RNA sequence: GGGAACGACUCGAGUAGAGUCGAAAAGCUAGGUCAACUCACUCCUAGCGAUCGCAGUGAGUUGAGCGAUCAGCGUUAUUCGGUACGGUGGACAUGCGAAAGCAUGUCCAUCGUACUGAAUAACGCAGCAGCAAGUACGGUUCGCCGUACUUGCUGCAAAAGAAACAACAACAACAAC
Reactivity to DMS in 0.01 (KOAc 150mM, MgCl2 10mM, bicine 150mM(pH8.5), 24C), signal-to-noise 2, nucleotides 027 to 126: g030c060u010a110g000g010u000c050a010a020c010u000c010a020c010u000c060c030u000a110g020c160g030a030u000c110g010c250a010g000u000g000a030g010u000u010g010a060g000c070g020a110u010c210a140g010c000g000u000u000a020u000u000c000g010g010u000a000c010g010g010u000g000g000a010c000a000u000g000c010g030a180a080a130g010c000a010u000g010u000c000c000a000u000c000g000u000a000c000u040g000a010a000u010a000a000c000g010c000a050